[RMDB]
RNA sequence: GGGAACGACUCGAGUAGAGUCGAAAAAUGGAAGCGGGUAAUAGAUGCUUUGAUCAGAAUGUACCUGAAGAAAUCAAUCGUAAAAUUGUUGACCAUGUCAGUGAUGUGAAUCUACCUUAUACAGAACCAGUACCAAUUCUUUCGAGAAUUGGUACUGAAAAGAAACAACAACAACAAC
Reactivity to 2A3 in 0.01 (KOAc 150mM, MgCl2 10mM, bicine 150mM(pH8.5), 24C), signal-to-noise 4, nucleotides 027 to 126: a000u140g020g000a050a030g040c040g000g060g000u040a070a030u030a140g110a090u080g000c080u110u090u110g080a130u060c010a020g070a120a040u190g000u110a060c000c000u050g050a130a040g110a100a140a000u080c040a010a020u070c060g150u150a080a090a060a030u120u030g020u030u060g030a020c010c040a020u080g010u020c020a020g040u040g150a020u040g090u040g070a010a050u010c010u010a020c000c000u210u130a170u030a150c100a020g040a010a020c010
Reactivity to DMS in 0.01 (KOAc 150mM, MgCl2 10mM, bicine 150mM(pH8.5), 24C), signal-to-noise 4, nucleotides 027 to 126: a070u000g000g000a100a060g000c030g000g000g000u010a040a070u010a050g010a130u000g010c100u000u010u010g020a080u020c000a050g000a120a020u020g000u010a050c040c030u020g000a080a080g010a090a090a060u030c080a010a060u020c080g030u020a050a080a070a080u010u010g000u020u020g000a060c020c050a070u020g000u010c040a040g020u000g000a060u010g010u010g020a060a020u000c060u010a060c060c010u010u020a080u000a060c140a140g000a130a100c190